Structure probing data (2A3) for a 207-nucleotide construct. 2A3 adducts were read by reverse transcription with SuperScript II with manganese. Conditions: 150 mM KOAc, 10 mM MgCl2 and 150 mM bicine (pH 8.5), 24 C.

RNA sequence: GGGAACGACUCGAGUAGAGUCGAAAAGGGUAGGCUGUUUUCAGUCUACCCGAUGUGCCUGUUUUCAGGCACGGAUAUCAGCCAUCCGACGGCCGGGGAUGGCCUAUCUGCUGAGCAUUCUGUGUGGAUUGUGAGGCAGUUAGCAGACGCGGCGACAGCGUAUCGACCAUUUCGAUGGUCGAUACGCAAAAGAAACAACAACAACAAC
Reactivity to 2A3 in 0.01 (KOAc 150mM, MgCl2 10mM, bicine 150mM(pH8.5), 24C), signal-to-noise 1, nucleotides 027 to 156: g000g000g000u000a000g000g000c010u060g190u250u180u280u300c010a000g020u000c000u010a000c000c000c010g000a000u010g010u000g000c030c000u080g010u150u170u150u270c030a000g000g000c000a000c000g060g000a150u210a070u100c080a000g000c000c000a000u000c010c100g010a170c000g140g000c000c030g000g000g000g000a000u000g000g000c000c000u000a010u000c000u000g010c010u060g000a000g000c000a020u000u050c030u030g270u130g150u300g300g000a000u010u000g000u000g000a090g010g010c000a000g000u010u000a000g000c010a020g020a090c050g000c010g100g010c010g000a120c160a040